[RMDB]
RNA sequence: GGGAACGACUCGAGUAGAGUCGAAAAGAUAUGGACUACCCACCAGUAGAACUACAAAUGUAUGUCGGAAACGACAUACGUUUGCUACUGAGGUCCUAAGUCAAACCUAAUGCUUCGGCAUUAGGAAGACAAGAACGCAGUUCGCUGCGUUCUUGUCAAAAGAAACAACAACAACAAC
Reactivity to 2A3 in 0.01 (KOAc 150mM, MgCl2 10mM, bicine 150mM(pH8.5), 24C), signal-to-noise 2, nucleotides 027 to 126: g020a060u160a070u130g000g000a000c020u210a200c030c020c030a010c020c020a020g000u020a000g020a150a080c210u190a050c300a010a000a010u000g000u010a000u020g000u020c020g060g000a080a060a110c010g050a000c010a020u010a000c000g000u010u000u000g030c010u010a000c000u000g020a010g020g010u010c000c000u040a210a040g140u050c070a120a000a130c010c000u000a010a010u000g010c000u000u140c300g150g000c010a010u010u000a000g010g000a010a020
Reactivity to DMS in 0.01 (KOAc 150mM, MgCl2 10mM, bicine 150mM(pH8.5), 24C), signal-to-noise 2, nucleotides 027 to 126: g020a070u010a240u000g000g000a000c000u030a170c040c000c010a300c150c010a010g000u020a000g000a040a060c100u010a300c000a010a010a000u000g020u000a000u000g000u000c000g000g000a090a040a210c000g000a020c000a000u000a000c020g000u000u000u000g000c020u010a020c000u000g000a100g010g010u000c000c000u000a060a110g030u000c050a120a100a170c000c000u000a000a010u000g040c030u000u050c230g000g010c000a000u000u000a010g000g010a020a070